Annotation
Conditions: 150 mM KOAc, 10 mM MgCl2 and 150 mM bicine (pH 8.5), 24 C. This 177-nucleotide RNA was probed chemically with DMS and 2A3. For DMS the reverse transcriptase was MarathonRT.
[RMDB]
RNA sequence: GGGAACGACUCGAGUAGAGUCGAAAACGCCGGCGUCUGUGCGCGCGGAGCAUCCGGAAAGACGCUCAACCGUUCGCGAAGCUGCCGCUGCUUCGCGCUCUGCUGCGUCGGCUCGGGCGUCGCCGCAGAAAAUAGCAGCAUUCGUGCUGCUAUUUUCAAAAGAAACAACAACAACAAC
Reactivity to DMS in 0.01 (KOAc 150mM, MgCl2 10mM, bicine 150mM(pH8.5), 24C), signal-to-noise 4, nucleotides 027 to 126: c160g000c030c020g020g020c020g010u000c080u010g020u000g020c300g000c030g010c020g000g000a030g020c020a040u000c110c010g000g010a060a160a090g010a120c090g000c010u000c090a110a120c120c080g020u010u010c130g010c050g030a090a030g020c020u000g010c030c030g030c200u010g000c000u010u000c000g020c000g000c020u000c030u010g010c070u000g010c010g040u000c010g000g020c010u010c050g010g000g000c020g010u000c040g000c040c020g020c190a130
Reactivity to 2A3 in 0.01 (KOAc 150mM, MgCl2 10mM, bicine 150mM(pH8.5), 24C), signal-to-noise 2, nucleotides 027 to 126: c040g000c010c040g000g000c010g030u100c120u130g040u010g010c020g000c000g000c020g030g000a010g000c010a010u070c030c020g040g040a100a160a000g070a020c040g040c000u010c050a080a240c060c090g160u210u140c050g000c020g050a060a020g080c020u050g010c030c020g030c030u020g000c000u000u000c000g000c010g010c000u010c020u060g060c010u020g020c010g010u020c000g020g000c020u000c000g000g030g000c020g050u080c080g060c070c000g020c030a040